RNA sequence: GGGAACGACUCGAGUAGAGUCGAAAAGAUAUGGACCAUUCGUGCGCUUCAUCGAUCUCGGAAACGAGGGAGAAGGCACGAGAUGGUCCUAAGUCAAAACAGAUCGUUAGUUCGCUAACGAUCUGAAUCCAUAGACAUUCUUCGGAAUGUCUAUGGAAAAAGAAACAACAACAACAAC
Reactivity to 2A3 in 0.01 (KOAc 150mM, MgCl2 10mM, bicine 150mM(pH8.5), 24C), signal-to-noise 8, nucleotides 027 to 126: g020a010u080a040u140g000g000a010c000c000a000u000u020c000g020u010g000c300g120c300u030u010c020a300u300c050g070a070u020c010u000c000g040g030a090a090a060c000g000a000g010g010g010a020g000a000a010g000g010c010a010c000g010a020g000a000u000g000g000u000c000c000u000a010a000g000u000c020a010a010a100a130c010a000g000a000u000c000g000u000u000a010g010u050u060c300g000c210u000a000a000c000g000a000u000c000u000g000a000a030
Reactivity to DMS in 0.01 (KOAc 150mM, MgCl2 10mM, bicine 150mM(pH8.5), 24C), signal-to-noise 7, nucleotides 027 to 126: g000a060u010a300u000g000g010a010c000c000a020u000u000c010g010u000g010c000g020c000u010u000c000a280u010c200g000a050u010c000u000c010g010g010a130a100a180c000g010a010g000g000g010a040g010a030a010g000g000c000a010c000g000a010g000a010u000g000g000u000c000c000u000a010a060g010u000c030a100a070a140a210c010a000g000a010u000c010g010u000u000a010g000u000u010c290g010c000u000a000a000c000g000a000u000c000u000g000a030a070